[RMDB]
RNA sequence: GGGAACGACUCGAGUAGAGUCGAAAAGAGCUGGAAACUGCGUCGAUGCGCUGACAUAUCUAUCAAAGCGUAGAUAAAACAUCGACGGCUAAUUAUUAAUGCCUAAUUAGCAGGAAAAUAGCUCAAAGGGUAAUGUUAUGUUCGCAUAACAUUACCCAAAAGAAACAACAACAACAAC
Reactivity to DMS in 0.01 (KOAc 150mM, MgCl2 10mM, bicine 150mM(pH8.5), 24C), signal-to-noise 3, nucleotides 027 to 126: g000a070g010c000u010g010g010a180a040a170c000u000g000c030g040u000c010g000a020u000g030c120g000c070u020g000a090c210a260u030a020u000c000u010a010u000c030a150a080a150g030c150g040u000a000g010a020u030a020a110a130a150c030a000u000c000g020a010c010g000g000c000u000a030a060u030u020a070u080u030a090a090u100g000c110c100u000a100a060u020u010a030g010c000a070g000g000a050a010a030a210u050a010g000c000u000c010a030a100a090
Reactivity to 2A3 in 0.01 (KOAc 150mM, MgCl2 10mM, bicine 150mM(pH8.5), 24C), signal-to-noise 6, nucleotides 027 to 126: g000a000g010c010u010g050g010a090a070a130c010u010g010c010g000u000c000g000a000u010g020c100g020c110u100g020a040c020a050u120a000u030c020u030a020u020c050a300a250a060g040c120g040u000a000g010a010u040a000a100a000a010c010a010u010c000g000a010c010g030g000c000u000a030a070u050u180a040u110u160a200a050u190g000c000c000u100a170a160u110u100a030g000c010a000g030g000a170a100a010a030u050a010g010c000u000c010a050a090a000
This 177-nucleotide RNA was probed chemically with DMS and 2A3. For DMS, 4,849 sequencing reads were counted. The reactions ran in a buffer of 150 mM KOAc, 10 mM MgCl2 and 150 mM bicine (pH 8.5), at 24 C.